[RMDB]
RNA sequence: GGGAACGACUCGAGUAGAGUCGAAAAGACUGUGAAUUGACCCAUCCGGCCUUGGCCAAGUCGGACGCUUCGGCGUGGAUCAGCUCGCGACGAAUGCGAACUGCCAGCGCCGGGUCCAGCUCGCGGCGCUACCCUCUGAAUUCGUUCAGAGGGUAGCAAAAGAAACAACAACAACAAC
Reactivity to 2A3 in 0.01 (KOAc 150mM, MgCl2 10mM, bicine 150mM(pH8.5), 24C), signal-to-noise 4, nucleotides 027 to 126: g020a030c050u050g010u060g130a070a130u120u100g040a080c000c000c010a010u020c010c000g010g000c010c010u040u050g030g000c020c020a030a020g040u040c020g030g020a040c030g020c050u130u150c040g010g000c010g000u040g060g010a160u140c020a010g020c030u030c010g000c000g040a160c080g120a130a050u280g000c000g000a020a010c010u020g000c000c010a030g070c010g000c000c000g010g000g000u000c010c000a010g000c020u030c020g060c030g060g010c030
Reactivity to DMS in 0.01 (KOAc 150mM, MgCl2 10mM, bicine 150mM(pH8.5), 24C), signal-to-noise 7, nucleotides 027 to 126: g000a120c030u000g010u000g010a050a110u000u000g010a100c020c020c040a150u000c010c010g000g000c010c000u000u000g010g000c020c080a160a110g000u000c040g010g010a100c060g010c070u000u010c030g010g010c000g040u000g000g000a110u010c100a020g030c130u000c000g020c000g010a140c180g000a080a070u000g010c000g000a030a040c020u000g010c050c020a120g010c100g000c010c010g000g000g010u000c060c030a040g010c040u000c050g010c080g010g010c140
Structure probing data (2A3 and DMS) for a 177-nucleotide construct. Values are in units of 0.01, from 0 to 300, in steps of 10. The data come from the RNA Mapping Database (RMDB), library OK2TRN. The DMS profile rests on 12,857 reads. The reactions ran in a buffer of 150 mM KOAc, 10 mM MgCl2 and 150 mM bicine (pH 8.5), at 24 C.